[RMDB]
RNA sequence: GGGAACGACUCGAGUAGAGUCGAAAAGACGGGCGCCACAUGGUCGGGACGCGGCCGGAUGCCGAAAUGGCUGAUCGGACAGAAUCCCCGGCAAUUCCUGAUCCUGCAUCCGGACGACGAACGCGAAACUCACCAGGAGGUUCGCCUCCUGGUGAGUAAAAGAAACAACAACAACAAC
Reactivity to DMS in 0.01 (KOAc 150mM, MgCl2 10mM, bicine 150mM(pH8.5), 24C), signal-to-noise 1, nucleotides 027 to 126: g010a180c010g010g000g020c020g050c060c110a140c130a120u030g000g020u000c050g010g030g010a190c140g020c260g000g010c000c010g010g000a040u000g010c010c140g010a020a070a070u000g010g010c070u000g000a170u010c020g010g040a120c120a110g000a060a300u000c050c050c000c000g000g030c020a120a070u000u010c010c050u000g020a050u000c010c050u000g000c030a060u000c000c040g020g010a020c080g020a100c040g010a160a110c060g020c040g000a190a180